[RMDB]
RNA sequence: GGGAACGACUCGAGUAGAGUCGAAAAAGUAUGGUACGCCAUACACCCCAUGCAUCUGAUGAGAGCUUUGCUGCUGAGAUUGUGUGAUUGCUCAGACUCAAAGUAAACGCCCUGAUGCAUGCGCAAAUCUCGCAUCCCGCUUCGGCGGGAUGCGAGAAAAAGAAACAACAACAACAAC
Reactivity to 2A3 in 0.01 (KOAc 150mM, MgCl2 10mM, bicine 150mM(pH8.5), 24C), signal-to-noise 1, nucleotides 027 to 126: a000g000u000a000u000g000g000u000a000c200g050c000c000a000u010a000c040a030c030c000c000c040a020u010g000c000a000u000c050u110g140a200u100g070a170g050a000g080c000u000u000u000g030c060u060g030c000u000g040a020g000a030u180u240g070u290g040u130g100a140u190u170g070c000u050c000a010g070a300c000u010c050a060a070a010g030u110a030a030a030c020g090c000c080c000u030g000a010u000g100c000a000u030g000c000g000c010a020a140a100